The record gives the reactivity of an RNA of 177 nucleotides to 2A3 and DMS. For DMS, 31,251 sequencing reads were counted. For DMS the reverse transcriptase was MarathonRT. The data come from the RNA Mapping Database (RMDB), library OK2TRN.
RNA sequence: GGGAACGACUCGAGUAGAGUCGAAAAAGUACGCGCGUCGAUCGCGCGCUCAGUACGAUCAGCGAUCCGCAUAGGCCUAUCGGCCGAUCUGGCCAGAUCGUGGCCGCAGCGCUGGUACCACGAGGCCUACCUGGAUAGAAUUCGUUCUAUCCAGGUAAAAAGAAACAACAACAACAAC
Reactivity to 2A3 in 0.01 (KOAc 150mM, MgCl2 10mM, bicine 150mM(pH8.5), 24C), signal-to-noise 9, nucleotides 027 to 126: a000g140u120a060c110g010c000g010c010g030u080c110g090a150u110c030g000c000g000c000g010c020u020c030a010g020u030a010c050g020a050u040c010a010g030c010g040a070u090c050c070g020c110a090u120a140g000g000c010c000u100a110u150c060g000g000c010c000g010a050u040c070u120g010g000c010c010a100g020a120u120c080g100u080g010g000c000c010g000c020a030g050c010g000c040u030g000g010u040a090c010c020a050c070g030a030g040g010c010c000
Reactivity to DMS in 0.01 (KOAc 150mM, MgCl2 10mM, bicine 150mM(pH8.5), 24C), signal-to-noise 9, nucleotides 027 to 126: a090g010u000a060c060g010c030g010c010g020u010c200g010a100u000c090g010c000g020c010g010c020u000c080a100g010u000a050c100g000a050u000c020a070g010c030g000a080u000c070c090g010c070a160u010a150g010g010c020c010u000a070u000c070g000g010c010c010g000a040u010c140u010g010g020c020c010a150g010a060u010c170g020u000g010g010c020c020g010c080a100g010c060g010c010u010g000g000u000a080c040c050a080c090g000a070g000g010c030c030
Overview
For 2A3, 22,114 sequencing reads were counted. Conditions: 150 mM KOAc, 10 mM MgCl2 and 150 mM bicine (pH 8.5), 24 C.